[RMDB]
The record gives the reactivity of an RNA of 177 nucleotides to 2A3 and DMS.

RNA sequence: GGGAACGACUCGAGUAGAGUCGAAAAGACGCCUGUGUGGCGAAACGAGCAAUGGUAUAAGCCGCAAUAGAAGAUGAGAUGGAAGCGGCAAGAUAGAAUGCUCGCAACUAGAUCCAUCUCACAGAGAAUAAUGCCAUUAGUUCGCUAAUGGCAUUAUAAAAGAAACAACAACAACAAC
Reactivity to 2A3 in 0.01 (KOAc 150mM, MgCl2 10mM, bicine 150mM(pH8.5), 24C), signal-to-noise 7, nucleotides 027 to 126: g060a010c010g040c010c000u180g070u090g110u280g170g000c020g000a060a070a010c020g010a000g050c020a120a180u120g060g050u110a050u060a160a030g000c000c010g010c010a020a090u120a120g160a160a010g110a190u030g000a000g010a000u000g000g000a120a030g000c000g020g000c010a020a010g020a020u080a030g130a140a080u060g000c040u050c040g000c010a030a020c020u080a050g010a200u010c000c000a000u000c000u010c010a020c010a000g110a000g050a090
Reactivity to DMS in 0.01 (KOAc 150mM, MgCl2 10mM, bicine 150mM(pH8.5), 24C), signal-to-noise 8, nucleotides 027 to 126: g010a190c090g020c000c000u000g020u040g030u020g000g010c000g010a030a080a130c040g010a030g000c040a060a080u030g010g020u030a060u010a080a250g000c000c000g000c020a150a110u070a100g020a110a130g000a130u000g000a000g010a030u000g000g010a040a140g010c030g000g000c010a030a040g010a140u030a100g030a140a080u010g000c000u020c000g010c130a070a070c180u020a110g020a170u000c000c000a010u000c000u000c000a020c120a150g000a120g010a130

Reactivities are given for positions 27 through 126. Reactivities are rounded to 0.1 and cut off at 0 and 3. Conditions: 150 mM KOAc, 10 mM MgCl2 and 150 mM bicine (pH 8.5), 24 C.